[RMDB]
Description
Structure probing data (DMS and 2A3) for a 207-nucleotide construct. For DMS, 5,248 sequencing reads were counted. The data come from the RNA Mapping Database (RMDB), library OK3TST. The 2A3 profile rests on 4,738 reads.

RNA sequence: GGGAACGACUCGAGUAGAGUCGAAAAGCAGGCCUCAUCCACCAUCACAAUCUAAAUCGGAGUCGACAUGGUCGAGACCGCAGACAUCAUCUGGGCCGAUGGUCCAGCAGCCAACCCAUUUGAGCCUGACAAAAGCAAGAUCCGCGCGUGGGGCACCUAGUAUACAUGAUUUCGAUCAUGUAUACUAAAAAGAAACAACAACAACAAC
Reactivity to DMS in 0.01 (KOAc 150mM, MgCl2 10mM, bicine 150mM(pH8.5), 24C), signal-to-noise 3, nucleotides 027 to 156: g010c050a090g030g010c010c010u000c010a090u000c020c050a090c030c010a060u000c040a090c100a070a160u000c050u000a060a120a150u000c060g040g000a160g010u010c030g040a090c030a110u000g050g000u020c040g000a100g010a080c020c030g030c030a080g000a050c010a120u010c040a120u010c020u010g000g020g040c020c020g000a080u000g040g040u010c000c020a170g030c110a120g000c020c010a080a060c010c010c000a090u000u010u000g020a110g000c000c000u000g000a190c050a030a050a100a120g010c050a080a090g000a080u000c030c010g020c040g020c060g020u000g020g010g010g010c030a080c040c050
Reactivity to 2A3 in 0.01 (KOAc 150mM, MgCl2 10mM, bicine 150mM(pH8.5), 24C), signal-to-noise 6, nucleotides 027 to 156: g070c040a030g030g040c020c010u020c020a060u010c010c030a020c030c020a040u120c050a060c060a110a090u070c050u200a130a090a070u150c070g010g010a030g080u050c010g040a060c070a180u170g070g010u030c020g000a020g050a060c020c030g000c030a010g050a070c000a100u090c010a010u020c030u010g030g000g000c020c050g120a130u190g010g020u040c040c020a020g050c020a010g030c040c010a030a100c030c010c010a020u050u030u100g020a020g010c010c010u020g010a060c050a020a120a000a000g040c020a040a040g000a070u040c050c040g020c010g020c010g070u050g010g010g010g000c010a020c000c020